Structure probing data (2A3 and DMS) for a 207-nucleotide construct. For 2A3 the reverse transcriptase was SuperScript II with manganese. The RNA was probed in 150 mM KOAc, 10 mM MgCl2 and 150 mM bicine (pH 8.5) at 24 C. For 2A3, 2,142 sequencing reads were counted. Values cover nucleotides 27 to 156. DMS adducts were read by reverse transcription with MarathonRT.
[RMDB]
RNA sequence: GGGAACGACUCGAGUAGAGUCGAAAAUGAAGCAAAUCCAUAAUUGCCAAUGAUGAGGAAUUCGCUAUUGCCGCCUAAAAACGGUUAGCCGGGGCUGCUAGAGCCUUGUUACCAAAGAUAGCCGGCGUUACGGCAUGAUGGUUCGCCAUCAUGCCAAUCAUUAAUUGGCGUUCGCGCCAAUUAAUGAAAAAGAAACAACAACAACAAC
Reactivity to 2A3 in 0.01 (KOAc 150mM, MgCl2 10mM, bicine 150mM(pH8.5), 24C), signal-to-noise 3, nucleotides 027 to 156: u100g020a050a000g030c020a040a020a060u040c050c020a040u080a140a160u130u060g030c030c020a080a030u170g020a050u070g020a080g060g000a060a120u130u090c070g010c030u050a060u070u170g000c000c010g010c010c010u070a070a060a020a000a000c010g010g010u070u040a020g030c020c020g010g000g010g000c020u030g030c080u130a050g000a010g200c020c000u000u000g030u050u050a040c020c030a070a050a000g070a030u030a020g050c040c020g010g000c010g060u090u130a050c060g000g010c000a000u000g000a000u000g000g080u000u050c230g030c040c000a000u000c000a000u010g000c000c000a000a000
Reactivity to DMS in 0.01 (KOAc 150mM, MgCl2 10mM, bicine 150mM(pH8.5), 24C), signal-to-noise 2, nucleotides 027 to 156: u000g010a140a110g030c050a050a070a100u000c030c030a140u000a100a140u000u000g000c030c080a080a130u010g010a110u010g010a130g020g000a080a110u000u000c020g030c040u010a060u000u000g040c000c060g040c060c030u000a010a040a100a090a090c070g020g000u010u000a030g010c050c080g020g000g070g010c030u000g000c080u000a110g020a080g010c030c020u000u010g030u000u000a130c070c030a060a090a100g000a100u000a040g000c020c060g050g000c000g030u000u000a040c110g030g020c000a030u010g000a020u000g020g010u000u000c270g060c010c000a010u000c010a000u000g000c000c000a000a040